[RMDB]
Annotation: Conditions: 150 mM KOAc, 10 mM MgCl2 and 150 mM bicine (pH 8.5), 24 C. An RNA of 177 nucleotides, treated with DMS and 2A3 and read out base by base.

RNA sequence: GGGAACGACUCGAGUAGAGUCGAAAAGAAAACCGCAGUUGGCUAGCGGAAAGAAAGAGGGUUAAAGCCAACGAAAUAAGUCGGAAAGCACGACCGACAAGAAAAGCCCUACAAUCGUGCAAGAAAAGGAGGGAUAUAUGUUCGCAUAUAUCCCUCCAAAAGAAACAACAACAACAAC
Reactivity to DMS in 0.01 (KOAc 150mM, MgCl2 10mM, bicine 150mM(pH8.5), 24C), signal-to-noise 3, nucleotides 027 to 126: g010a090a040a140a180c020c050g030c020a080g000u000u000g000g010c000u000a100g080c020g000g000a040a060a150g000a060a120a110g050a080g000g000g020u000u010a020a070a000g000c030c000a000a000c000g030a160a090a110u030a060a090g000u000c000g020g000a100a060a060g020c000a010c000g000a040c000c000g020a010c000a120a060g000a070a070a060a060g000c000c020c000u000a100c200a100a040u000c010g050u000g000c000a170a140g020a040a030a070a070
Reactivity to 2A3 in 0.01 (KOAc 150mM, MgCl2 10mM, bicine 150mM(pH8.5), 24C), signal-to-noise 3, nucleotides 027 to 126: g050a000a040a000a000c010c000g000c000a000g000u010u010g000g000c010u080a130g000c040g080g100a130a050a020g110a020a150a020g070a050g000g000g050u070u080a060a050a030g000c000c000a010a010c000g040a000a090a120u220a020a140g010u010c010g000g000a130a150a000g020c000a000c000g000a000c000c000g010a000c000a030a000g100a010a070a000a000g030c000c010c000u040a110c050a010a010u050c000g000u000g010c000a020a000g140a080a080a000a020
DMS adducts were read by reverse transcription with MarathonRT. For DMS, 5,921 sequencing reads were counted.